RNA sequence: GGGAACGACUCGAGUAGAGUCGAAAAUAUUAUCAUUCAUAAGUGCAUGUCCAGAUUUUAAGCUUAGGCUGAUGAAAGAUACUCAAACUAUCUCACAGACUGUUGCACUCACUGAAGGCUUAGGUGACACCUUCCUCAGGUUCGCCUGAGGAAGGUGAAAAGAAACAACAACAACAAC
Reactivity to 2A3 in 0.01 (KOAc 150mM, MgCl2 10mM, bicine 150mM(pH8.5), 24C), signal-to-noise 2, nucleotides 027 to 126: u190a030u040u100a060u120c060a050u040u050c020a010u050a090a030g000u000g010c020a000u080g040u040c040c000a010g050a040u010u050u040u300a070a020g010c000u020u100a090g030g000c010u000g040a190u050g030a140a060a060g000a000u010a000c010u010c130a080a010a080c030u060a040u070c000u020c010a060c010a060g070a160c030u020g040u100u060g010c000a000c030u060c000a000c040u050g020a010a010g030g000c040u120u280a010g000g000u030g050a000
Reactivity to DMS in 0.01 (KOAc 150mM, MgCl2 10mM, bicine 150mM(pH8.5), 24C), signal-to-noise 3, nucleotides 027 to 126: u050a040u020u070a040u020c090a080u000u000c030a060u050a110a020g000u000g010c020a040u000g000u000c030c070a150g010a110u040u010u050u040a040a020g010c030u030u040a080g000g020c000u000g000a020u010g000a110a110a040g000a010u000a000c110u000c230a120a080a130c300u000a030u000c010u010c040a130c150a050g000a040c020u000g010u000u000g000c030a050c060u000c050a020c180u010g000a070a130g000g030c080u000u010a000g000g010u000g000a180
Chemical mapping of a 177-nucleotide RNA with 2A3 and DMS. The DMS profile rests on 3,338 reads. DMS adducts were read by reverse transcription with MarathonRT. Source: RMDB library OK1LIB, as collected in RNAgym. For 2A3 the reverse transcriptase was SuperScript II with manganese. The reactions ran in a buffer of 150 mM KOAc, 10 mM MgCl2 and 150 mM bicine (pH 8.5), at 24 C. The 2A3 profile rests on 1,296 reads.